[RMDB]
RNA sequence: GGGAACGACUCGAGUAGAGUCGAAAAGGUAACUACAUAGUUCCAAAGAAAGCAUAGCCAUUAAUGGAAAAAAGUGAGGAAUUUGUGGAAGUGGCUGGGUCCAUAAUUAUCUGGAAUUCAUAUGAACAACAUACGACCAUUUCGAUGGUCGUAUGUUAAAAGAAACAACAACAACAAC
Reactivity to DMS in 0.01 (KOAc 150mM, MgCl2 10mM, bicine 150mM(pH8.5), 24C), signal-to-noise 2, nucleotides 027 to 126: g010g010u000a060a100c060u010a110c080a080u010a090g020u000u010c000c000a070a140a150g010a070a100a110g030c060a130u010a130g020c010c030a080u000u010a070a110u010g030g000a020a080a090a090a050a110g000u000g000a120g000g000a060a060u010u020u010g010u010g000g000a150a070g010u000g000g000c020u000g010g000g020u000c010c010a030u010a070a060u010u010a030u000c080u000g000g010a070a070u000u010c060a050u000a100u020g000a050a100c160